Notes
The record gives the reactivity of an RNA of 177 nucleotides to DMS and 2A3. DMS adducts were read by reverse transcription with MarathonRT. Conditions: 150 mM KOAc, 10 mM MgCl2 and 150 mM bicine (pH 8.5), 24 C.

RNA sequence: GGGAACGACUCGAGUAGAGUCGAAAAUCAUUUUCAUGUCAUGCUUCCAGGAAGCAGUGCUGCUUCUCUAAAAUUUCCAGGCAAACCACUUCAGUCUUAUAUUAAUUUAAAGGGGAAGUCUAAGCAACAUAUCUCAUAGCUUCGGCUAUGAGAUAUGAAAAGAAACAACAACAACAAC
Reactivity to DMS in 0.01 (KOAc 150mM, MgCl2 10mM, bicine 150mM(pH8.5), 24C), signal-to-noise 2, nucleotides 027 to 126: u020c070a110u010u010u010u000c030a070u010g010u020c090a040u000g010c070u000u010c040c140a100g000g000a060a050g030c050a060g030u010g030c080u000g010c030u000u010c010u010c040u000a040a030a080a080u000u010u000c060c020a150g000g000c020a060a090a100c120c150a030c060u000u000c020a110g000u010c000u000u000a060u000a150u020u000a140a080u030u000u000a030a060a070g000g010g000g010a040a020g010u000c100u000a070a110g000c040a110a200
Reactivity to 2A3 in 0.01 (KOAc 150mM, MgCl2 10mM, bicine 150mM(pH8.5), 24C), signal-to-noise 2, nucleotides 027 to 126: u020c000a000u160u100u020u080c080a050u140g070u070c050a050u100g010c000u100u000c010c050a050g070g110a030a000g000c040a030g040u010g080c010u010g000c000u030u020c010u000c010u050a070a180a110a140u070u070u040c030c050a030g030g000c010a090a070a100c040c000a060c010u040u060c010a030g020u000c050u030u050a110u040a070u220u130a120a040u220u200u130a070a160a000g010g000g030g000a000a030g040u000c040u100a030a040g000c010a000a030